[RMDB]
RNA sequence: GGGAACGACUCGAGUAGAGUCGAAAAUAGGAUAAUGGCUGCUAGCUGCAUCCAUGUUGCUGCAAAGGACAUGAUUUUAUUCUUUUUUAUGGAUGCAUAAUAUUCCAUGAUAUAUAUAUGUACCACAUUUUCAUUAUCCAACCCACUCUUGGUGGGCCGAUGACAUCUCAUUCGUGAGAUGUCAUCGAAAAGAAACAACAACAACAAC
Reactivity to 2A3 in 0.01 (KOAc 150mM, MgCl2 10mM, bicine 150mM(pH8.5), 24C), signal-to-noise 3, nucleotides 027 to 156: u170a030g000g020a010u010a030a000u030g040g000c040u040g040c070u100a070g040c050u030g000c010a030u040c070c030a050u070g020u030u090g040c050u010g040c060a050a040a150g020g010a020c000a040u080g090a160u130u090u080u100a150u170u080c020u040u120u020u030u030u050a020u060g000g010a020u020g000c020a010u080a150a030u100a120u120u020c030c000a010u070g040a010u020a000u010a000u020a010u010a020u170g020u060a120c010c020a080c020a120u090u080u050u100c020a020u010u040a010u000c000c000a000a080c010c010c000a010c000u130c070u070u150g080g010u000g000g010g010c050
Reactivity to DMS in 0.01 (KOAc 150mM, MgCl2 10mM, bicine 150mM(pH8.5), 24C), signal-to-noise 1, nucleotides 027 to 156: u010a120g000g020a040u000a070a070u010g000g050c100u010g040c080u030a200g050c090u000g010c010a030u010c020c000a100u010g000u000u000g010c010u000g020c060a090a060a100g010g020a050c070a070u010g000a140u000u000u000u010a030u020u020c020u010u000u010u000u000u000a040u020g000g020a080u000g000c020a000u000a050a020u000a070u000u000c140c110a230u020g000a090u000a020u000a080u000a280u000a070u040g000u000a080c000c000a040c020a110u000u000u010u000c000a060u000u000a040u000c030c010a010a040c010c000c000a050c000u020c180u010u000g020g010u020g020g000g040c050